[RMDB]
RNA sequence: GGGAACGACUCGAGUAGAGUCGAAAACGCUGCGCCCCCAGUCGCCCGAGCCUUGUGGCGUCAGACGCAACUCGCGCCCAGCCCGGGCAGCCGGAGUGCAGCAGGCGGGCGCGCCUCGGUCCGGGGCUACUGGGAACCAUUUCGAUGGUUCCCAGUAAAAAGAAACAACAACAACAAC
Reactivity to DMS in 0.01 (KOAc 150mM, MgCl2 10mM, bicine 150mM(pH8.5), 24C), signal-to-noise 1, nucleotides 027 to 126: c110g010c010u010g000c050g010c000c000c040c020c040a080g010u010c040g010c020c020c020g000a070g010c080c180u000u010g010u010g040g010c000g010u000c250a070g000a090c150g000c230a090a100c200u000c150g020c010g030c010c000c000a120g000c000c000c010g010g050g010c010a000g020c020c140g000g010a130g000u000g030c020a030g020c020a030g000g000c080g020g000g020c040g010c050g020c020c020u000c100g020g020u020c060c060g030g000g000g020c050